[RMDB]
RNA sequence: GGGAACGACUCGAGUAGAGUCGAAAAGAUAUGGAACGGUAGAUGAGCAACAGCUACUUUCAUCAUAUACACUCGGAAACGAGUGUAUAUGAUGAAAGUAGACAUGCUCGCUAUUCGUUCCUAAGUCCUCUGAUUAUGUCUUCGGACAUAAUCAGAGAAAAGAAACAACAACAACAAC
Reactivity to DMS in 0.01 (KOAc 150mM, MgCl2 10mM, bicine 150mM(pH8.5), 24C), signal-to-noise 2, nucleotides 027 to 126: g000a120u010a300u000g000g010a000a000c010g000g030u010a010g010a110u010g030a020g010c010a060a070c300a220g000c000u010a010c010u000u000u000c000a020u020c010a000u000a010u000a020c000a010c000u000c000g020g000a100a140a220c010g000a020g030u000g000u000a000u000a010u000g000a020u000g010a000a000a010g020u000a010g000a020c080a220u010g020c000u000c000g000c000u000a010u000u010c000g020u000u000c000c000u000a030a160g010u000c080
This 177-nucleotide RNA was probed chemically with DMS. The RNA was probed in 150 mM KOAc, 10 mM MgCl2 and 150 mM bicine (pH 8.5) at 24 C. For DMS, 1,796 sequencing reads were counted.